[RMDB]
Conditions: 150 mM KOAc, 10 mM MgCl2 and 150 mM bicine (pH 8.5), 24 C. This 177-nucleotide RNA was probed chemically with DMS and 2A3. For DMS the reverse transcriptase was MarathonRT.
RNA sequence: GGGAACGACUCGAGUAGAGUCGAAAAGGUAAGCGCCUCUGGCCCGAGGCCGCUCGUCGGGAAUCGGACACUGGAACUAGUACUCUGGUCAAUGCGGAUUGCCUGUGGCGGUGUUGGCUGGACGACCGCCUCCUGGACAUUUCGAUGUCCAGGAGGCAAAAGAAACAACAACAACAAC
Reactivity to DMS in 0.01 (KOAc 150mM, MgCl2 10mM, bicine 150mM(pH8.5), 24C), signal-to-noise 1, nucleotides 027 to 126: g010g060u010a180a040g060c180g030c040c000u010c020u040g020g020c000c010c140g000a060g000g000c020c000g000c000u000c130g000u020c100g000g000g000a100a080u050c020g050g000a010c050a020c100u000g090g000a100a040c100u000a050g040u050a090c140u040c000u020g000g000u030c010a100a070u000g000c040g020g020a150u030u000g000c030c000u000g040u070g020g070c030g000g020u020g000u020u000g000g060c000u010g050g000a030c040g020a050c140c210
Reactivity to 2A3 in 0.01 (KOAc 150mM, MgCl2 10mM, bicine 150mM(pH8.5), 24C), signal-to-noise 3, nucleotides 027 to 126: g070g010u110a070a050g080c010g000c040c000u010c010u010g070g010c010c000c000g040a050g020g020c030c000g020c000u100c030g130u040c040g000g000g040a020a070u070c010g020g040a000c030a040c140u030g010g040a130a000c040u020a020g060u130a100c040u030c010u060g000g000u030c000a000a060u040g020c030g070g050a120u080u110g060c000c010u100g040u060g070g000c020g020g010u040g030u040u060g010g000c010u020g000g000a030c020g020a010c000c050